Chemical mapping of a 177-nucleotide RNA with 2A3 and DMS.
For DMS, 8,816 sequencing reads were counted.
Conditions: 150 mM KOAc, 10 mM MgCl2 and 150 mM bicine (pH 8.5), 24 C.

RNA sequence: GGGAACGACUCGAGUAGAGUCGAAAAUGAGAAUACUUUUAGUACAAGCGAGUACACGCAGUAUACUGCCACUUGUGUGAGAAUACUUUUAGUACAAGCGAGUACACGCUGUAUACUGCCACUUGUGGCAUUGAGCGAAUUUCGAUUCGCUCAAUGCAAAAGAAACAACAACAACAAC
Reactivity to 2A3 in 0.01 (KOAc 150mM, MgCl2 10mM, bicine 150mM(pH8.5), 24C), signal-to-noise 9, nucleotides 027 to 126: u230g010a030g110a110a080u170a170c050u080u110u080u140a100g050u080a050c030a120a020g030c020g040a020g050u120a050c060a010c070g000c010a000g000u000a000u010a010c030u050g010c010c000a020c010u040u030g020u010g020u050g120a080g090a110a050u090a070c030u080u150u120u260a050g010u010a010c010a050a020g020c020g010a010g030u080a060c040a020c060g000c000u000g000u000a000u000a010c000u010g010c000c010a010c000u010u030g020u050g050
Reactivity to DMS in 0.01 (KOAc 150mM, MgCl2 10mM, bicine 150mM(pH8.5), 24C), signal-to-noise 5, nucleotides 027 to 126: u020g000a110g020a070a110u010a060c030u010u010u010u010a100g020u010a060c130a040a110g020c030g000a130g000u010a040c100a130c300g000c050a050g010u000a050u010a030c020u010g000c030c130a050c030u020u030g010u040g010u020g010a060g020a100a100u020a040c070u000u010u010u030a060g020u020a020c060a080a230g000c010g000a100g020u010a040c070a140c300g000c020u000g000u000a040u000a040c010u010g010c000c070a020c010u000u000g020u000g000
Annotation
Values cover nucleotides 27 to 126.